[RMDB]
RNA sequence: GGGAACGACUCGAGUAGAGUCGAAAAGAGACUUUAACACCCCACUGUCAGUAUUAUUAGACAGAUCAACGAGACAGAAAAUUAACAAGGAUAUUCAGGACUUGAACUCAGCUCUGGAUCAAGUGGAGUAAUAAAUUUUGUUCGCAAAAUUUAUUACAAAAGAAACAACAACAACAAC
Reactivity to 2A3 in 0.01 (KOAc 150mM, MgCl2 10mM, bicine 150mM(pH8.5), 24C), signal-to-noise 2, nucleotides 027 to 126: g010a040g020a010c000u030u120u120a080a020c030a060c020c000c020c010a070c000u010g000u000c000a000g060u070a060u300u030a070u120u050a150g010a070c020a000g040a050u040c020a010a090c110g010a010g040a100c030a030g210a080a070a050a080u210u160a070a120c030a060a000g020g010a020u030a080u230u110c020a030g120g000a010c010u050u040g050a080a030c020u060c060a030g010c020u000c030u070g050g010a010u010c010a000a100g080u040g110g000a090
Reactivity to DMS in 0.01 (KOAc 150mM, MgCl2 10mM, bicine 150mM(pH8.5), 24C), signal-to-noise 3, nucleotides 027 to 126: g000a140g020a120c100u010u010u010a080a110c090a140c060c010c020c120a220c020u000g010u010c020a130g010u010a080u010u010a100u020u000a190g000a070c050a040g000a120u020c080a070a090c090g000a080g000a070c050a100g000a030a040a040a090u000u000a090a110c080a030a030g000g000a070u000a050u000u030c120a020g000g000a050c020u000u010g000a060a100c140u010c120a040g010c060u000c010u000g000g020a080u010c040a050a100g030u000g000g010a250

An RNA of 177 nucleotides, treated with 2A3 and DMS and read out base by base.
It was measured as part of the RMDB library OK2TST.
For DMS, 2,020 sequencing reads were counted.
The RNA was probed in 150 mM KOAc, 10 mM MgCl2 and 150 mM bicine (pH 8.5) at 24 C.